RNA sequence: GGGAACGACUCGAGUAGAGUCGAAAAACUGGCAUUUGAUGGAGAUCACGUGGGAUGCCUUCACUGUUUGUACCACGAUGUUCAUCGUACAAACACAAUGUUCAGCAAUUCCUUGGCUGCUGGAUUGGGGUUACUGUGCUGUCCAUCCUGGAGAUGAGUAAUGAAGGUGGUUCGCCACCUUCAUUACAAAAGAAACAACAACAACAAC
Reactivity to 2A3 in 0.01 (KOAc 150mM, MgCl2 10mM, bicine 150mM(pH8.5), 24C), signal-to-noise 3, nucleotides 027 to 156: a000c020u030g040g000c030a050u030u030u160g090a080u050g020g020a030g010a070u090c050a020c120g020u090g010g040g000a040u090g050c010c000u140u130c120a130c090u060g020u040u020u030g010u030a020c020c040a070c150g040a070u080g110u160u150c080a040u050c070g030u040a010c020a000a020a000c020a000c020a080a000u140g020u110u120c020a000g010c030a070a110u110u100c020c000u080u080g080g000c050u050g000c030u030g040g000a060u000u120g000g000g020g000u050u040a060c040u070g030u070g030c020u030g060u030c020c000a000u030c010c040u040g060g010a060g020a090u130g030a020
Reactivity to DMS in 0.01 (KOAc 150mM, MgCl2 10mM, bicine 150mM(pH8.5), 24C), signal-to-noise 2, nucleotides 027 to 156: a070c060u000g000g020c020a090u000u000u010g010a110u000g030g000a060g010a110u000c060a080c030g030u000g010g030g030a120u000g000c070c030u000u010c080a150c070u020g030u010u010u000g050u000a060c010c030a230c060g040a100u000g000u010u000c090a050u010c040g040u010a040c030a010a010a010c010a130c110a040a140u000g030u000u000c040a050g000c000a050a110u000u000c000c030u010u000g020g030c050u000g040c000u010g010g000a100u000u000g030g040g050g020u000u000a090c070u010g000u000g020c020u000g000u010c040c010a090u000c020c010u020g030g010a130g010a090u000g000a250

Chemical mapping of a 207-nucleotide RNA with 2A3 and DMS.
The reactions ran in a buffer of 150 mM KOAc, 10 mM MgCl2 and 150 mM bicine (pH 8.5), at 24 C.
The 2A3 profile rests on 3,076 reads.